An RNA of 177 nucleotides, treated with DMS and 2A3 and read out base by base. The reactions ran in a buffer of 150 mM KOAc, 10 mM MgCl2 and 150 mM bicine (pH 8.5), at 24 C. It was measured as part of the RMDB libraries RFM100 and RFMREP. For DMS the reverse transcriptase was MarathonRT. As a SHAPE reagent, 2A3 marks flexible, mostly unpaired nucleotides at the ribose 2'-OH.

RNA sequence: GGGAACGACUCGAGUAGAGUCGAAAAGAAAGAUUGCUGUGAUGACAUCUAAUAGGACGGUAUCUGAGCGACGGAUCUAUCCUCGCGUGAUUAUACCUAAACUGAGACUAAAAAUGUCUGAGCAAAAAUAGGAUUAGAGAUUCGUCUCUAAUCCUAUAAAAGAAACAACAACAACAAC
Reactivity to DMS in 0.01 (KOAc 150mM, MgCl2 10mM, bicine 150mM(pH8.5), 24C), signal-to-noise 9, nucleotides 027 to 126: g010a130a100a100g010a140u010u010g010c020u000g020u020g000a110u010g000a010c020a020u000c050u010a110a180u020a030g000g010a140c160g010g000u000a020u000c050u010g000a240g010c000g010a020c220g010g000a060u020c220u020a100u010c010c010u000c040g010c000g010u020g000a100u020u010a030u000a010c010c000u010a070a080a170c130u010g010a140g000a130c090u010a010a080a120a120a030u000g000u000c000u000g010a080g010c030a020a030a070a100
Reactivity to 2A3 in 0.01 (KOAc 150mM, MgCl2 10mM, bicine 150mM(pH8.5), 24C), signal-to-noise 9, nucleotides 027 to 126: g090a010a090a010g090a060u090u110g010c040u030g040u070g210a060u070g010a010c010a010u020c030u120a140a100u060a150g040g010a020c050g000g000u010a010u000c040u090g060a030g040c010g030a060c200g000g010a030u060c050u170a230u100c070c000u010c010g010c000g010u010g010a010u040u060a010u010a030c010c000u040a110a120a040c060u090g050a010g060a120c080u130a060a030a070a030a030u020g000u010c010u040g060a010g000c010a020a020a050a020